[RMDB]
RNA sequence: GGGAACGACUCGAGUAGAGUCGAAAAGCAACGAGCGUAAUCGCGUCUUGACAAGGGAGACUGUAGGUGACGUGAGUAUCUAUCCCAGUGUGCAUAGCGCACAAUACGCUGAUCUACAGUCAAUUAAUUUUACGAGGAUCUUCGGAUCCUCGUAAAAAAAAGAAACAACAACAACAAC
Reactivity to DMS in 0.01 (KOAc 150mM, MgCl2 10mM, bicine 150mM(pH8.5), 24C), signal-to-noise 1, nucleotides 027 to 126: g000c060a060a070c030g050a000g010c030g000u000a120a160u000c020g000c030g000u000c020u000u020g000a190c240a140a120g000g020g000a140g020a010c010u030g000u000a000g000g010u000g000a030c000g000u000g000a040g030u000a030u000c110u000a080u000c000c000c010a170g010u030g000u000g020c030a120u000a130g020c240g050c010a010c000a050a110u000a020c010g030c020u030g000a080u000c020u010a020c010a010g030u000c010a110a080u050u000a080a030

This 177-nucleotide RNA was probed chemically with DMS. The RNA was probed in 150 mM KOAc, 10 mM MgCl2 and 150 mM bicine (pH 8.5) at 24 C. The DMS profile rests on 618 reads.